[RMDB]
RNA sequence: GGGAACGACUCGAGUAGAGUCGAAAAGGACUGCGGCAACGCCGCCGGGGCAGCGCCAGUUGCCUGUGCCCCCGCGGUGUUGGGGGUAGGAAAGAGACGCAGCUCAGCCGGAAUGUCGCACGCAUCCGCAGCGGAUGCGGUUCGCCGCAUCCGCUGCAAAAGAAACAACAACAACAAC
Reactivity to 2A3 in 0.01 (KOAc 150mM, MgCl2 10mM, bicine 150mM(pH8.5), 24C), signal-to-noise 2, nucleotides 027 to 126: g060g050a040c030u020g010c000g040g010c000a060a000c030g000c010c000g000c010c040g020g000g000g000c000a030g020c030g020c070c000a020g060u070u250g100c000c000u110g130u300g070c030c020c000c000c000g000c040g130g230u300g050u130u090g000g000g000g010g060u020a050g000g000a000a110a000g130a020g000a000c020g000c000a020g000c000u030c020a000g010c030c010g010g060a090a040u030g000u030c020g000c100a000c020g050c000a050u080c040c020
Overview
This 177-nucleotide RNA was probed chemically with 2A3. The data come from the RNA Mapping Database (RMDB), library OK1LIB. The 2A3 profile rests on 749 reads. 2A3 is a SHAPE reagent: it acylates the 2'-hydroxyl of flexible nucleotides of all four kinds.